[RMDB]
RNA sequence: GGGAACGACUCGAGUAGAGUCGAAAAGGGGUCAGUGCGAGGCUCCUGAAUGAGCUAUGAAGUACUGAAGCCUCCACGGUAUGGAGCUCGCGGAGCCGAUGAGCACUGACGGAGGCACCCAAACCGAUUGAACUGGGUUCGCCCAGUUCAAUCGGAAGUCCCUAUAUAGGUUCGCCUAUAUAGGGACAAAAGAAACAACAACAACAAC
Reactivity to 2A3 in 0.01 (KOAc 150mM, MgCl2 10mM, bicine 150mM(pH8.5), 24C), signal-to-noise 2, nucleotides 027 to 156: g020g020g080g020u000c020a010g000u020g000c010g060a110g000g010c070u030c000c020u050g020a170a300u300g020a000g010c040u090a200u300g000a000a000g030u030a000c020u040g070a110a050g030c000c000u000c000c010a010c000g000g000u000a000u020g010g010a020g010c000u000c000g030c050g000g020a010g000c070c020g010a230u130g020a010g010c010a000c000u000g000a000c010g000g010a010g000g000c010a030c000c000c000a010a000a070c000c000g000a000u000u000g010a010a010c000u000g020g000g170u090u150c300g130c020c000c010a000g000u000u000c020a000a010u000c000g000g000a000a030